The record gives the reactivity of an RNA of 177 nucleotides to 2A3 and DMS.
For DMS the reverse transcriptase was MarathonRT.
The RNA was probed in 150 mM KOAc, 10 mM MgCl2 and 150 mM bicine (pH 8.5) at 24 C.
Reactivities are given for positions 27 through 126.
RNA sequence: GGGAACGACUCGAGUAGAGUCGAAAAUGCAGUUUUGACACCUUAUCAACACGUCCCCAUAGCUUUAGAAGCUUUAUCUUCCGGAUGUUAUGAUGCUUUGCUAGCUCCUAUUAUAGAAGUUACAGCAAUACACCAACUUUUUCGAAAGUUGGUGUAUAAAAGAAACAACAACAACAAC
Reactivity to 2A3 in 0.01 (KOAc 150mM, MgCl2 10mM, bicine 150mM(pH8.5), 24C), signal-to-noise 4, nucleotides 027 to 126: u080g020c030a050g030u000u030u080u070g040a020c010a060c080c020u080u140a080u090c000a000a040c030a010c070g040u020c000c020c010c010a040u030a020g000c010u060u100u020a070g040a090a000g000c000u080u150u130a160u080c030u060u010c030c020g090g020a070u050g030u070u020a040u070g070a030u090g020c000u070u070u060g020c000u040a010g000c000u000c000c020u130a170u300u080a160u120a070g050a050a010g040u080u070a040c020a010g050c030a030
Reactivity to DMS in 0.01 (KOAc 150mM, MgCl2 10mM, bicine 150mM(pH8.5), 24C), signal-to-noise 7, nucleotides 027 to 126: u010g020c080a090g010u000u000u000u010g010a090c110a090c090c090u010u000a100u010c040a050a060c090a080c090g010u000c010c010c020c030a070u000a030g000c030u000u000u010a080g000a060a080g000c180u000u010u010a060u020c040u000u010c020c050g000g010a050u000g020u000u000a040u000g000a120u000g010c030u000u010u000g010c070u000a050g000c010u000c010c010u000a100u010u010a150u010a040g010a030a020g010u000u000a070c100a060g000c040a080